[RMDB]
RNA sequence: GGGAACGACUCGAGUAGAGUCGAAAAAUUGUACUAUUAUGCUACAUUCUAUUUUACUAAUGAGCCUGCAUUUAUUAUGCAUGUUUCUUGGUACAUUAUGUUCGGGCCUAUCGUUCCCAUAUGGAUGAAGCGCUUCGCUUCGGCGAAGCGAAAAGAAACAACAACAACAAC
Reactivity to 2A3 in 0.01 (KOAc 150mM, MgCl2 10mM, bicine 150mM(pH8.5), 24C), signal-to-noise 4, nucleotides 027 to 129: a000u050u030g020u000a010c000u010a040u300u020a080u170g010c020u050a080c000a020u040u100c030u140a120u100u130u050u040a070c020u080a110a060u150g010a000g010c000c010u000g000c030a000u000u060u030a250u280u130a000u050g010c000a020u000g000u000u090u040c020u040u010g000g010u050a060c000a030u020u100a060u250g030u050u030c060g010g130g110c040c000u020a010u050c010g000u000u010c010c000c000a010u090a030u000g010g030a050u040g080a030a000g030
Reactivity to DMS in 0.01 (KOAc 150mM, MgCl2 10mM, bicine 150mM(pH8.5), 24C), signal-to-noise 3, nucleotides 027 to 129: a010u020u000g000u000a050c070u000a090u080u000a120u290g010c150u050a040c020a030u010u010c050u000a040u060u070u060u030a110c060u030a080a020u070g070a000g030c050c030u110g000c020a010u300u000u050a140u050u010a050u040g000c000a040u000g040u030u020u000c140u030u080g000g030u030a000c240a040u030u050a080u010g000u040u030c190g000g070g100c160c020u000a170u020c080g030u000u020c020c010c000a080u060a060u060g030g010a070u000g010a060a040g020
About this RNA
This 170-nucleotide RNA was probed chemically with 2A3 and DMS. 2A3 is a SHAPE reagent: it acylates the 2'-hydroxyl of flexible nucleotides of all four kinds. For 2A3, 4,104 sequencing reads were counted. Reactivities are given for positions 27 through 129. The DMS profile rests on 4,034 reads. For 2A3 the reverse transcriptase was SuperScript II with manganese.